[RMDB]
This 177-nucleotide RNA was probed chemically with DMS and 2A3. For 2A3, 1,318 sequencing reads were counted.
RNA sequence: GGGAACGACUCGAGUAGAGUCGAAAAGAUGAUGAUUGUCACGUGUCAUAUUCUGAUUGGUCAAUGAAAACAACAAUGCAUUUCAUCUUAUAUGGAGUUGACAUUCAAUCAGAACAUGACACGUGAUAUAGCCAACAUGGUUCGCCAUGUUGGCUAUAAAAGAAACAACAACAACAAC
Reactivity to DMS in 0.01 (KOAc 150mM, MgCl2 10mM, bicine 150mM(pH8.5), 24C), signal-to-noise 2, nucleotides 027 to 126: g000a050u000g030a080u040g020a150u040u030g010u020c000a000c010g000u000g010u010c000a020u010a080u010u010c000u000g000a000u000u020g010g010u040c130a010a000u000g010a180a060a080a080c190a070a110c170a060a050u010g000c130a080u010u020u000c100a060u000c180u000u000a090u030a050u000g000g000a220g010u000u000g000a100c010a110u000u030c000a000a030u000c000a000g030a010a010c010a000u000g000a010c000a000c000g000u000g000a020u000
Reactivity to 2A3 in 0.01 (KOAc 150mM, MgCl2 10mM, bicine 150mM(pH8.5), 24C), signal-to-noise 3, nucleotides 027 to 126: g110a030u260g040a020u060g040a100u050u190g060u040c000a000c010g010u010g000u000c000a010u000a050u020u040c010u000g000a000u000u000g050g000u070c030a080a030u020g060a010a040a000a000c040a000a020c030a130a140u160g060c070a070u010u090u090c020a120u080c080u280u190a230u010a040u150g060g000a020g030u010u030g040a010c000a000u090u050c020a020a000u000c000a000g010a000a000c000a010u000g000a000c000a000c000g000u000g000a000u000

Values cover nucleotides 27 to 126.